[RMDB]
RNA sequence: GGGAACGACUCGAGUAGAGUCGAAAAAGCCUGGUCGAUACGUCGACCAGGAAAUGCCGCCACAACGGCUUCCUGGCGUGGCGGAUCUCAUCCAAUGGAGCAACGCUCCGGAUACGUCCGGAGCGAAAAAAGCUCUGCUUCUUCGGAAGCAGAGCAAGAUAGUUACAACGUUCGCGUUGUAACUAUCAAAAGAAACAACAACAACAAC
Reactivity to 2A3 in 0.01 (KOAc 150mM, MgCl2 10mM, bicine 150mM(pH8.5), 24C), signal-to-noise 1, nucleotides 027 to 156: a000g300c010c000u000g000g010u000c000g010a010u020a070c220g030u000c000g030a010c000c000a000g000g000a010a000a000u000g000c000c000g000c010c010a020c000a010a040c040g010g040c000u160u180c020c020u040g020g010c030g000u000g000g020c010g000g010a000u020c020u020c030a120u080c070c100a030a150u170g040g000a020g010c020a000a100c010g010c010u000c020c000g000g010a040u050a020c150g050u010c010c000g000g000a030g010c030g000a000a000a000a000a000a000g000c010u000c000u000g000c010u000u000c010u000u040c120g040g000a000a000g000c000a010g010a000g000c000a000a010
An RNA of 207 nucleotides, treated with 2A3 and read out base by base.
Values are in units of 0.01, from 0 to 300, in steps of 10.